[RMDB]
RNA sequence: GGGAACGACUCGAGUAGAGUCGAAAAGAUAUGGAGACGUAAGAGCCGAGGAUCUAUACUAAACGUUCGUAUAUCGGAAACGAUAUACGAACGUGAUGUAUAGGGAGGCUUAUCGUCUCCUAAGUCACUUGUUCAUACAGUUCGCUGUAUGAACAAGAAAAGAAACAACAACAACAAC
Reactivity to 2A3 in 0.01 (KOAc 150mM, MgCl2 10mM, bicine 150mM(pH8.5), 24C), signal-to-noise 2, nucleotides 027 to 126: g040a010u060a050u200g030g000a010g000a000c030g060u140a300a300g030a020g160c010c030g010a300g060g000a000u000c010u000a010u000a030c010u040a220a140a070c010g000u010u010c000g010u000a000u000a010u010c000g020g010a040a100a040c030g000a000u000a000u000a000c000g000a000a000c000g010u010g000a000u050g000u000a000u000a010g000g000g000a000g000g010c000u000u000a030u030c000g000u000c010u020c000c000u020a060a010g020u010c010a020
Reactivity to DMS in 0.01 (KOAc 150mM, MgCl2 10mM, bicine 150mM(pH8.5), 24C), signal-to-noise 3, nucleotides 027 to 126: g010a030u010a300u000g000g010a000g000a010c000g010u010a160a300g010a020g030c000c000g000a040g050g000a040u020c000u000a000u000a000c000u010a280a270a010c010g000u000u000c000g000u000a010u000a000u010c010g000g000a110a110a200c010g040a010u000a000u000a000c000g000a000a010c000g010u000g000a090u020g000u010a000u000a000g000g000g010a020g010g030c010u000u000a020u000c010g010u000c000u000c000c000u000a010a070g020u000c030a270
Conditions: 150 mM KOAc, 10 mM MgCl2 and 150 mM bicine (pH 8.5), 24 C. An RNA of 177 nucleotides, treated with 2A3 and DMS and read out base by base. The DMS profile rests on 4,084 reads. As a SHAPE reagent, 2A3 marks flexible, mostly unpaired nucleotides at the ribose 2'-OH. DMS adducts were read by reverse transcription with MarathonRT. It was measured as part of the RMDB library TTRINS. The 2A3 profile rests on 6,886 reads. Values are in units of 0.01, from 0 to 300, in steps of 10.